The record gives the reactivity of an RNA of 177 nucleotides to DMS and 2A3. The reactions ran in a buffer of 150 mM KOAc, 10 mM MgCl2 and 150 mM bicine (pH 8.5), at 24 C. Reactivities are given for positions 27 through 126. It was measured as part of the RMDB library OK2TST.
RNA sequence: GGGAACGACUCGAGUAGAGUCGAAAACUUUUGCUGAGAAAAGAUUAUGAAGUACAUGGCAUGAUCAGACGAUCAUCUUCAUUUAAUACUGAACGUCUCUCAGAUAUUUAUGAAGAAAAACACAAAAGCUACUAAAUCGAUUCGUCGAUUUAGUAGCAAAAGAAACAACAACAACAAC
Reactivity to DMS in 0.01 (KOAc 150mM, MgCl2 10mM, bicine 150mM(pH8.5), 24C), signal-to-noise 1, nucleotides 027 to 126: c030u000u000u000u000g020c020u000g000a130g030a090a080a200a100g000a030u000u000a060u000g000a070a100g000u010a100c230a060u010g000g000c290a020u000g000a040u000c000a070g020a210c180g030a100u010c050a090u000c020u000u000c000a010u020u000u000a040a030u000a030c010u010g010a070a100c250g000u020c170u000c080u010c010a020g000a100u000a010u000u000u010a010u010g010a040a030g010a050a030a100a100a110c170a070c130a080a020a030a100
Reactivity to 2A3 in 0.01 (KOAc 150mM, MgCl2 10mM, bicine 150mM(pH8.5), 24C), signal-to-noise 1, nucleotides 027 to 126: c010u090u010u160u160g000c000u070g020a010g050a090a190a040a000g050a030u090u130a040u240g040a030a040g030u070a050c030a070u030g090g000c010a010u020g000a000u000c000a020g170a300c100g020a030u010c000a040u020c000u060u020c000a010u000u060u110a080a040u080a020c000u000g000a050a020c020g110u000c020u020c000u000c080a000g090a140u040a050u060u010u050a080u060g020a050a040g050a060a070a010a010a000c020a000c010a030a030a170a000